[RMDB]
RNA sequence: GGGAACGACUCGAGUAGAGUCGAAAAAUAAGAGUAGUCAAGGAUGACUUAUAAAGACAAAAUAUGCACACAUCCUUCAACCUAGCAAUCCUAAUCUCUAGAAAGGAAAGAAUUACAGACACAAUACUGCCACAGUAAGUUUUAUUUCAGCAGUAAACCCUAAAUACGACUUCGGUCGUAUUUAGGGAAAAGAAACAACAACAACAAC
Reactivity to 2A3 in 0.01 (KOAc 150mM, MgCl2 10mM, bicine 150mM(pH8.5), 24C), signal-to-noise 1, nucleotides 027 to 156: a000u160a090a020g050a070g040u270a000g060u040c040a010a000g010g010a020u070g040a050c040u180u140a100u150a190a090a110g100a030c010a030a180a000a000u080a000u090g030c050a010c000a000c000a100u040c000c000u030u030c050a080a070c060c030u010a010g090c000a010a010u030c000c040u090a030a060u080c010u030c000u090a020g020a100a050a010g150g000a000a000a140g090a050a040u160u240a120c050a040g080a000c060a000c000a100a030u040a130c000u000g040c000c040a090c050a030g080u030a040a000g040u030u000u010u260a130u030u010u010c010a000g020c060a000g000u070a140a090a090
An RNA of 207 nucleotides, treated with 2A3 and read out base by base. The RNA was probed in 150 mM KOAc, 10 mM MgCl2 and 150 mM bicine (pH 8.5) at 24 C.